Chemical mapping of a 207-nucleotide RNA with 2A3. 2A3 adducts were read by reverse transcription with SuperScript II with manganese.

RNA sequence: GGGAACGACUCGAGUAGAGUCGAAAAGAUCAGCAAGACGCUGAAUGGGUUACUGACACGUGGUUAAUUGAUGAUGGUGACCCGAUUGUUGAUGCUGUGCUCUCAUCAUUCAUGUUCUCAUUAUCGAUGGAUGAGCGAGGACGAAGUGCCAGUGACGCCCCUAAACCGGAUUCGUCCGGUUUAGGGGAAAAGAAACAACAACAACAAC
Reactivity to 2A3 in 0.01 (KOAc 150mM, MgCl2 10mM, bicine 150mM(pH8.5), 24C), signal-to-noise 1, nucleotides 027 to 156: g070a200u000c000a010g000c010a000a140g280a160c210g000c020u020g030a030a030u080g000g000g000u000u000a000c070u080g090a000c010a010c070g220u200g050g230u230u280a190a180u270u300g150a150u000g000a000u050g000g000u020g040a010c000c000c000g050a100u030u030g020u020u020g020a050u150g030c050u100g080u200g000c000u010c000u000c000a100u000c030a000u020u000c000a000u010g030u220u000c070u000c140a100u030u300a100u200c120g090a110u080g050g000a000u000g020a020g090c160g090a000g040g010a000c110g020a240a060g030u000g080c000c000a020g000u000g020a020c020g080